The record gives the reactivity of an RNA of 177 nucleotides to DMS. The reactions ran in a buffer of 150 mM KOAc, 10 mM MgCl2 and 150 mM bicine (pH 8.5), at 24 C.

RNA sequence: GGGAACGACUCGAGUAGAGUCGAAAAGUUGCGACCUUCGGGUCGCAACAAAUACCCAGGUACAUGCUCGGUAGAAUGUACAAACCCUUGGAAACAAGGGAAAAAGCUUAACCUUCGGGUUAAGCAACCAAGAAUUAGAGUUCGCUCUAAUUCUUGGAAAAGAAACAACAACAACAAC
Reactivity to DMS in 0.01 (KOAc 150mM, MgCl2 10mM, bicine 150mM(pH8.5), 24C), signal-to-noise 4, nucleotides 027 to 126: g010u000u000g010c010g000a000c000c000u000u010c180g050g020g030u010c000g030c010a000a000c000a000a130a100u010a130c020c000c000a130g010g010u000a010c010a010u000g000c060u000c170g010g010u000a040g010a060a030u000g010u000a020c020a140a100a220c000c000c000u000u000g000g000a150a120a210c000a020a010g010g000g010a000a020a050a120a060g010c010u000u010a010a000c000c000u000u010c190g020g000g010u000u000a000a010g000c010a030a040
DMS adducts were read by reverse transcription with MarathonRT.